Structure probing data (2A3 and DMS) for a 207-nucleotide construct.
[RMDB]
RNA sequence: GGGAACGACUCGAGUAGAGUCGAAAAACUCCUAUUCUAACACGUCCUCGUCGUACAGAGUGGUAACAUGUGUCACCACAUAUCCAAGCUUGGGUACACGGGCUUGACCCAACCCCUUGGGCGGAUGAAAACCAGAUUACGUUCGCGUAAUCUGGAACAAAAUCGUAUGCUUCGGCAUACGAUUUUGAAAAGAAACAACAACAACAAC
Reactivity to 2A3 in 0.01 (KOAc 150mM, MgCl2 10mM, bicine 150mM(pH8.5), 24C), signal-to-noise 3, nucleotides 027 to 156: a000c080u050c020c000u040a130u130u060c030u090a100a000c020a010c070g070u040c020c090u080c070g090u040c010g030u140a120c120a120g100a020g090u040g010g060u130a090a050c070a150u190g100u070g050u100c060a020c030c020a010c020a070u140a010u070c000c000a010a010g060c020u020u010g000g000g010u010a010c030a010c020g030g000g000c030u130u290g120a300c000c010c000a020a040c000c000c000c000u010u010g000g000g000c000g000g000a010u060g060a020a090a000a030c010c000a000g010a000u000u000a010c010g020u020u050c230g000c000g140u000a000a000u000c000u000g010g000a000a000
Reactivity to DMS in 0.01 (KOAc 150mM, MgCl2 10mM, bicine 150mM(pH8.5), 24C), signal-to-noise 2, nucleotides 027 to 156: a040c050u000c010c000u000a050u030u000c030u000a060a130c120a080c050g010u000c000c000u000c060g020u000c090g040u010a130c130a100g010a100g030u000g000g010u010a010a020c020a180u000g030u010g030u000c020a040c020c010a030c020a140u020a050u000c020c010a020a300g030c050u000u030g010g020g020u000a100c120a090c120g000g000g020c020u000u020g000a140c000c010c000a050a070c030c010c000c040u010u000g000g010g010c300g030g000a120u010g000a080a080a090a170c010c000a000g010a030u000u000a010c000g030u000u000c270g060c020g000u010a000a020u000c000u000g000g000a020a100

For 2A3 the reverse transcriptase was SuperScript II with manganese. For 2A3, 1,792 sequencing reads were counted. The RNA was probed in 150 mM KOAc, 10 mM MgCl2 and 150 mM bicine (pH 8.5) at 24 C. Reactivities are given for positions 27 through 156.